An RNA of 177 nucleotides, treated with 2A3 and DMS and read out base by base.
It was measured as part of the RMDB library OK2TRN.
DMS adducts were read by reverse transcription with MarathonRT.
[RMDB]
RNA sequence: GGGAACGACUCGAGUAGAGUCGAAAAAGUCGGUGAGGUAACCCUUACGGGAGCCAGCCGCCGAAGGUGGGGCAAAUGAUUGGGGUGAAGUCGUAACAAGGUAGCCGUAUCGGAAGGUGCGGCUGGACUAUUACCAAAGGUUCGCCUUUGGUAAUAGAAAAGAAACAACAACAACAAC
Reactivity to 2A3 in 0.01 (KOAc 150mM, MgCl2 10mM, bicine 150mM(pH8.5), 24C), signal-to-noise 7, nucleotides 027 to 126: a000g070u050c030g000g020u060g030a220g090g040u170a200a300c010c000c000u040u190a080c110g000g000g000a010g020c020c000a020g040c030c010g000c000c010g010a020a010g040g110u300g010g000g000g040c060a060a100a060u200g070a160u110u160g000g010g010g020u060g060a040a020g040u040c030g030u040a050a060c040a100a040g130g040u070a000g050c000c010g010u010a010u020c010g020g100a130a060g000g000u010g010c000g000g000c000u000g000g000a010
Reactivity to DMS in 0.01 (KOAc 150mM, MgCl2 10mM, bicine 150mM(pH8.5), 24C), signal-to-noise 9, nucleotides 027 to 126: a150g020u000c020g000g010u010g010a120g010g000u000a110a150c020c010c020u000u010a160c290g010g010g020a300g010c020c020a250g020c110c040g010c020c020g010a030a040g000g010u010g000g000g000g000c110a050a080a060u010g010a100u000u010g010g000g000g000u010g000a090a060g000u000c040g010u000a090a100c160a090a090g010g010u000a020g000c000c000g020u000a010u000c010g010g040a110a100g010g020u000g000c000g000g000c000u000g000g000a150